RNA sequence: GGGAACGACUCGAGUAGAGUCGAAAAAUGGUAGUUAGUCUACUCGCUAUCCUAGUUACUUUGGAGUAAUCUAAAGUGUGUGUAAACGGGCGAAAGUCUGUAAAAUACUGGGGACAUAGGGCCAACAAGAACUAGUAGACCUUCGGGUCUACUAGAAGAUAACAAUAUUGUUCGCAAUAUUGUUAUCAAAAGAAACAACAACAACAAC
Reactivity to DMS in 0.01 (KOAc 150mM, MgCl2 10mM, bicine 150mM(pH8.5), 24C), signal-to-noise 3, nucleotides 027 to 156: a090u000g010g000u000a060g020u010u000a090g000u000c000u000a050c020u000c060g010c060u000a070u000c030c010u000a070g020u000u000a020c010u000u000u010g010g010a050g010u000a140a140u000c020u000a020a010a040g040u000g020u010g030u010g010u010a050a180a060c010g000g020g010c010g010a140a090a180g010u010c020u000g010u000a050a090a060a080u000a020c020u000g000g020g000g000a060c050a110u000a080g010g000g000c010c020a070a090c040a080a130g010a100a170c000u000a010g020u000a010g010a020c000c000u000u000c300g060g040g050u000c000u000a000c010u000a000g000a030a090
Reactivity to 2A3 in 0.01 (KOAc 150mM, MgCl2 10mM, bicine 150mM(pH8.5), 24C), signal-to-noise 5, nucleotides 027 to 156: a010u070g020g000u020a050g030u130u050a040g050u050c020u030a040c010u030c030g050c030u040a050u070c000c010u030a040g020u050u040a010c010u000u010u020g020g020a030g020u090a130a130u010c010u020a010a020a000g020u030g000u010g000u000g030u080a100a110a030c010g000g000g000c010g040a080a030a010g010u020c010u030g050u060a020a050a030a020u110a040c020u020g000g000g000g020a000c020a060u080a030g060g010g020c030c010a030a040c040a110a060g080a080a030c000u000a000g000u000a000g000a000c000c000u020u050c210g080g000g000u000c000u000a000c000u000a000g000a000a000
Source: RMDB library M2RFPK, as collected in RNAgym. An RNA of 207 nucleotides, treated with DMS and 2A3 and read out base by base. 2A3 is a SHAPE reagent: it acylates the 2'-hydroxyl of flexible nucleotides of all four kinds. The RNA was probed in 150 mM KOAc, 10 mM MgCl2 and 150 mM bicine (pH 8.5) at 24 C. For DMS the reverse transcriptase was MarathonRT. The 2A3 profile rests on 5,450 reads. High DMS reactivity at an A or C suggests that its Watson-Crick edge is free.